[RMDB]
RNA sequence: GGGAACGACUCGAGUAGAGUCGAAAAGAAAGAAAGAAGAAUCACCAGGAGGCAAGGAUCCUCAACUACGUUAUUCGGGCACCUUGAGUUGAGAGGAGCUAGUCGUGCGCCCGGCCUGGAGAUCAAAACACGACAGGCGGGUUCGCCCGCCUGUCAACAAAUAAAGAUUGUUCGCAAUCUUUAUUUGAAAAGAAACAACAACAACAAC
Reactivity to 2A3 in 0.01 (KOAc 150mM, MgCl2 10mM, bicine 150mM(pH8.5), 24C), signal-to-noise 1, nucleotides 027 to 156: g090a000a040a010g070a050a090a020g070a040a010g020a030a090u000c000a050c010c000a000g010g010a020g010g010c000a010a150g030g000a020u040c000c000u000c000a010a030c020u230a100c090g100u100u020a070u070u130c010g010g010g000c020a040c030c050u120u170g070a020g020u000u010g010a030g020a010g000g020a010g000c000u000a000g120u100c070g050u050g040c100g020c010c000c000g000g000c010c000u000g020g000a030g000a010u040c020a000a120a070a050c070a040c120g020a000c000a000g010g000c000g000g020g000u020u010c000g030c000c020c000g050c010c000u000g010u000c010a000a000
Reactivity to DMS in 0.01 (KOAc 150mM, MgCl2 10mM, bicine 150mM(pH8.5), 24C), signal-to-noise 1, nucleotides 027 to 156: g000a140a030a120g010a080a090a110g030a130a170g010a170a110u010c030a110c000c020a050g010g020a140g030g000c000a090a220g020g010a030u000c070c020u000c020a070a050c020u000a050c110g010u010u010a180u000u010c000g060g010g000c010a080c030c110u000u000g020a070g010u000u000g010a160g000a040g010g000a060g050c030u000a070g040u000c080g000u000g000c030g010c030c030c010g030g000c010c070u000g000g000a100g000a070u010c010a000a050a070a120c060a050c020g000a030c010a030g010g050c000g020g010g010u000u000c300g040c000c000c000g010c020c000u000g000u000c010a020a030